Structure probing data (DMS and 2A3) for a 177-nucleotide construct.
It was measured as part of the RMDB library RFMREP.
The 2A3 profile rests on 1,905 reads.
The reactions ran in a buffer of 150 mM KOAc, 10 mM MgCl2 and 150 mM bicine (pH 8.5), at 24 C.

[RMDB]
RNA sequence: GGGAACGACUCGAGUAGAGUCGAAAAUUCCCUUGACCGAGAGGUCUGGGUAAUCCUUUAAUACUCAUCGUGCUGGGGAUUGAUUCUUGUAAUUAUUAAUCAUGAACGAGGAAUUCCUAGUAAACGCGAAGUGUAAUGACUUCGGUCAUUACACUUCAAAAGAAACAACAACAACAAC
Reactivity to DMS in 0.01 (KOAc 150mM, MgCl2 10mM, bicine 150mM(pH8.5), 24C), signal-to-noise 2, nucleotides 027 to 126: u000u010c020c010c010u000u010g010a000c000c030g030a290g010a240g010g000u010c000u010g000g010g010u000a050a050u000c030c040u020u000u020a120a120u010a060c110u010c080a100u010c040g030u000g010c060u000g020g010g010g010a040u000u000g000a180u000u020c020u000u000g010u000a110a090u010u030a210u000u000a060a090u000c140a040u000g010a120a070c120g010a030g010g010a070a060u000u000c000c000u000a030g040u000a030a040a100c150g020c300
Reactivity to 2A3 in 0.01 (KOAc 150mM, MgCl2 10mM, bicine 150mM(pH8.5), 24C), signal-to-noise 2, nucleotides 027 to 126: u040u010c000c000c000u010u130g010a010c000c000g030a030g000a040g060g000u000c020u010g020g000g000u050a060a040u080c000c020u090u190u110a190a110u080a110c060u010c130a140u070c070g030u010g020c000u020g000g000g000g000a000u000u060g060a070u140u000c000u030u040g000u040a120a060u080u140a090u100u120a090a090u110c060a030u080g070a040a020c010g000a010g020g020a010a000u010u010c010c000u000a020g010u030a140a210a060c050g010c040